This 177-nucleotide RNA was probed chemically with 2A3 and DMS. Conditions: 150 mM KOAc, 10 mM MgCl2 and 150 mM bicine (pH 8.5), 24 C. The data come from the RNA Mapping Database (RMDB), libraries RFM100 and RFMREP. 2A3 adducts were read by reverse transcription with SuperScript II with manganese. Values cover nucleotides 27 to 126.
RNA sequence: GGGAACGACUCGAGUAGAGUCGAAAAUAGAUUUAAGGUUAGAAGAAUUGUGGAAGUCGUGAGACUUCCCUUUUUUUCAUCUUAACGUUUACUAUCCUUCAUUGUUUGAAUGUGCAAGAUAUUUUGUCUUUUAGUAGUUUUUCGAAACUACUAAAAGAAAAGAAACAACAACAACAAC
Reactivity to 2A3 in 0.01 (KOAc 150mM, MgCl2 10mM, bicine 150mM(pH8.5), 24C), signal-to-noise 5, nucleotides 027 to 126: u040a000g030a030u010u010u040a000a010g040g020u060u240a050g020a010a000g010a000a020u040u050g110u300g050g000a000a000g000u010c020g040u070g110a120g000a040c000u000u020c000c000c000u000u000u000u000u000u000u000c000a010u000c000u000u000a020a000c030g000u020u000u030a060c050u070a080u030c010c000u090u160c070a170u050u100g130u110u130u110g180a240a110u110g040u060g080c060a060a040g060a160u070a140u190u120u060u100g120u040
Reactivity to DMS in 0.01 (KOAc 150mM, MgCl2 10mM, bicine 150mM(pH8.5), 24C), signal-to-noise 2, nucleotides 027 to 126: u010a050g010a050u000u010u000a000a020g030g010u000u020a100g020a010a000g010a010a010u010u000g000u040g020g020a020a020g000u010c000g010u030g000a210g000a010c000u000u010c010c010c000u000u000u000u000u000u000u000c010a030u000c000u000u000a000a010c300g010u000u000u000a060c060u000a090u000c000c020u000u000c130a150u000u000g000u000u010u000g020a100a070u020g010u000g010c080a060a070g000a090u010a040u010u000u010u000g010u010